[RMDB]
RNA sequence: GGGAACGACUCGAGUAGAGUCGAAAAGGACUGGACCAGGACCACAGGUACCGCCGGACCCAUAUAAGGUACCAACCAGAAUAAGACAGAUACAAAAUGGGCAGCACAAUGUAGCCAGUCAGAAUCGCGUGCCUAGUCUACGGCACGAGAGAGCUAAGUGAAAAUUACCUUUCGAGGUAAUUUUCACAAAAGAAACAACAACAACAAC
Reactivity to DMS in 0.01 (KOAc 150mM, MgCl2 10mM, bicine 150mM(pH8.5), 24C), signal-to-noise 1, nucleotides 027 to 156: g040g010a110c000u000g000g030a090c070c000a120g000g050a140c020c050a070c040a070g050g020u000a050c030c030g040c080c000g050g030a100c020c010c040a080u000a130u030a060a130g000g040u010a060c080c020a060a120c050c010a180g000a060a200u010a110a090g020a120c050a130g000a080u010a080c150a040a060a080a010u000g030g000g010c040a110g030c020a050c070a030a060u000g040u000a090g030c050c000a070g000u000c020a140g000a110a090u000c050g020c000g050u010g070c000c000u000a220g040u060c180u000a130c280g010g000c000a040c000g000a030g010a060g000a080g020c110u000a020a270
Reactivity to 2A3 in 0.01 (KOAc 150mM, MgCl2 10mM, bicine 150mM(pH8.5), 24C), signal-to-noise 1, nucleotides 027 to 156: g040g000a030c050u050g010g020a000c030c110a040g010g060a010c000c030a040c050a070g010g000u050a040c000c030g050c020c010g070g020a060c040c010c000a010u100a030u010a130a040g020g030u020a040c010c030a000a030c040c020a020g020a120a070u170a160a000g100a030c070a050g100a100u120a110c060a030a130a070a020u100g040g000g000c010a010g070c000a040c030a080a110u120g010u070a020g010c020c030a000g070u060c030a010g140a080a100u080c000g010c010g010u000g000c000c000u010a060g040u040c040u080a050c080g000g000c010a000c000g000a000g000a000g000a000g010c040u070a150a050

Chemical mapping of a 207-nucleotide RNA with DMS and 2A3. The 2A3 profile rests on 763 reads. For DMS the reverse transcriptase was MarathonRT. The RNA was probed in 150 mM KOAc, 10 mM MgCl2 and 150 mM bicine (pH 8.5) at 24 C.